[RMDB]
RNA sequence: GGGAACGACUCGAGUAGAGUCGAAAAUAUGGUCGAUUCGGACAACUGUUGGUCAAUGGUCGUUGGACACACGGGAUCUGGAAAAUCCACGUAUCUUCCUGUCCAGUACUCUAACUACCUUGCCAAGCCUACCCGCACACUUCGGUGUGCGGGUAGGAAAAGAAACAACAACAACAAC
Reactivity to 2A3 in 0.01 (KOAc 150mM, MgCl2 10mM, bicine 150mM(pH8.5), 24C), signal-to-noise 1, nucleotides 027 to 126: u300a090u040g110g020u040c060g030a230u210u100c080g100g000a010c040a040a050c090u190g120u120u030g000g010u180c040a000a020u250g000g000u000c000g000u000u020g000g000a000c000a000c050a000c070g040g000g000a050u000c120u050g000g000a010a000a020a060u080c120c130a120c130g200u210a020u000c050u000u000c000c000u000g000u010c000c000a000g000u000a020c000u000c000u050a000a000c010u000a000c000c000u000u000g030c000c000a000a020g050